[RMDB]
RNA sequence: GGGAACGACUCGAGUAGAGUCGAAAAGUGCGGAAUGAAAUUCAUAGGAGCCUCCCCAUUAUGGCUGAACGCCGCGGUAAUCCGCGUAGUCGCGACGUAAACGUUCUGUGUUCGCGUUCAGGCCUCAACUACUGCUCGCAUUCGUGCGAGCAGUAGUAAAAGAAACAACAACAACAAC
Reactivity to 2A3 in 0.01 (KOAc 150mM, MgCl2 10mM, bicine 150mM(pH8.5), 24C), signal-to-noise 1, nucleotides 027 to 126: g090u090g000c060g110g300a040a000u030g030a150a140a230u200u080c090a040u180a120g160g000a010g030c000c010u000c010c000c000c010a040u200u260a030u130g040g070c010u000g000a000a010c000g030c000c000g000c020g000g000u100a230a050u080c020c000g000c000g000u010a000g070u000c020g000c000g000a010c020g010u070a050a090a100c090g070u140u080c100u080g000u000g030u190u110c110g000c000g020u010u030c000a010g040g090c000c000u070c000a000
Reactivity to DMS in 0.01 (KOAc 150mM, MgCl2 10mM, bicine 150mM(pH8.5), 24C), signal-to-noise 1, nucleotides 027 to 126: g070u000g060c000g020g020a250a070u020g010a100a050a260u040u000c020a110u050a140g000g030a300g000c050c030u000c010c000c000c030a130u000u000a120u000g010g000c010u000g000a010a020c020g000c000c000g030c040g070g020u010a150a200u030c000c020g030c000g000u010a010g000u000c030g000c050g000a080c070g000u010a160a220a090c100g030u000u000c060u030g070u000g000u000u000c150g020c000g000u000u000c040a030g030g000c010c000u010c300a070
Overview: This 177-nucleotide RNA was probed chemically with 2A3 and DMS. 2A3 adducts were read by reverse transcription with SuperScript II with manganese. The DMS profile rests on 611 reads. Source: RMDB library OK2TRN, as collected in RNAgym. High 2A3 reactivity points to a flexible backbone, as in loops and unpaired stretches. For 2A3, 618 sequencing reads were counted. Conditions: 150 mM KOAc, 10 mM MgCl2 and 150 mM bicine (pH 8.5), 24 C.